[RMDB]
RNA sequence: GGGAACGACUCGAGUAGAGUCGAAAAACGAUGUGUUGACCGGCUGCCGUUUGAGGACUUUGGUCACCCAGACUAGACACCUUCUGUGCUCAUGUUUGGAAAGCUGAAAGGGAAGGACAGCUGUGCCGCCAUCAAUAAAGUUCGCUUUAUUGAUGGCAAAAGAAACAACAACAACAAC
Reactivity to DMS in 0.01 (KOAc 150mM, MgCl2 10mM, bicine 150mM(pH8.5), 24C), signal-to-noise 6, nucleotides 027 to 126: a090c080g000a080u010g020u000g010u000u010g010a070c050c020g000g010c040u000g010c030c020g000u000u000u010g020a140g010g000a100c060u000u010u000g010g010u000c040a160c300c000c020a050g010a040c020u000a290g010a070c040a040c020c190u000u010c110u010g020u000g010c130u000c030a110u000g010u000u000u000g010g010a080a150a130g000c010u000g010a040a050a070g010g010g000a090a050g000g000a050c030a020g000c020u000g000u000g010c090c080
Reactivity to 2A3 in 0.01 (KOAc 150mM, MgCl2 10mM, bicine 150mM(pH8.5), 24C), signal-to-noise 6, nucleotides 027 to 126: a000c070g050a120u100g080u020g020u150u120g070a060c030c010g010g010c030u020g000c020c020g110u060u100u150g110a080g030g050a030c000u050u070u060g010g000u060c000a030c000c010c000a000g030a010c020u050a050g020a040c000a030c010c010u220u150c090u270g020u020g010c010u000c040a050u070g030u020u040u010g040g000a100a040a010g020c020u070g080a100a020a020g050g010g020a030a040g030g000a070c000a020g000c010u030g040u130g090c010c030

Source information: This 177-nucleotide RNA was probed chemically with DMS and 2A3. For DMS the reverse transcriptase was MarathonRT. For 2A3 the reverse transcriptase was SuperScript II with manganese. Reactivities are given for positions 27 through 126. For 2A3, 9,048 sequencing reads were counted.